[RMDB]
RNA sequence: GGGAACGACUCGAGUAGAGUCGAAAAGAUAUGGAUCUAUACUAAUAGGUUGUGAUGACCUCGGAAACGAGCAAGCAACCAAAAUUAAAGGUAGAUCCUAAGUCAAACCUUCUCUUCGGAGAAGGAACCAUUCGCAUAAGUUCGCUUAUGCGAAUGGAAAAGAAACAACAACAACAAC
Reactivity to 2A3 in 0.01 (KOAc 150mM, MgCl2 10mM, bicine 150mM(pH8.5), 24C), signal-to-noise 2, nucleotides 027 to 126: g020a030u070a070u120g000g000a000u010c020u000a010u040a250c020u030a060a100u050a140g000g000u020u010g020u040g110a300u110g060a090c020c010u000c000g040g010a050a080a030c000g000a000g010c020a160a030g020c000a010a010c000c000a120a090a020a140u090u040a060a100a010g030g000u000a000g000a000u000c000c010u000a070a000g010u000c030a050a020a300c010c000u000u010c010u000c000u010u060c300g150g000a000g000a000a000g000g000a000a010
Reactivity to DMS in 0.01 (KOAc 150mM, MgCl2 10mM, bicine 150mM(pH8.5), 24C), signal-to-noise 2, nucleotides 027 to 126: g000a060u000a300u010g000g000a020u010c000u000a000u000a050c010u010a030a010u000a160g020g000u000u000g020u000g020a080u000g030a110c300c000u000c010g000g000a020a100a130c000g020a020g010c020a060a180g000c000a010a000c000c000a010a070a060a050u000u000a010a050a000g000g000u000a000g010a010u000c000c000u000a040a020g000u040c030a160a100a180c000c000u010u000c000u000c000u000u010c210g030g010a000g010a000a000g000g020a020a090
The record gives the reactivity of an RNA of 177 nucleotides to 2A3 and DMS. For 2A3, 3,223 sequencing reads were counted. The reactions ran in a buffer of 150 mM KOAc, 10 mM MgCl2 and 150 mM bicine (pH 8.5), at 24 C. It was measured as part of the RMDB library TTRDEL.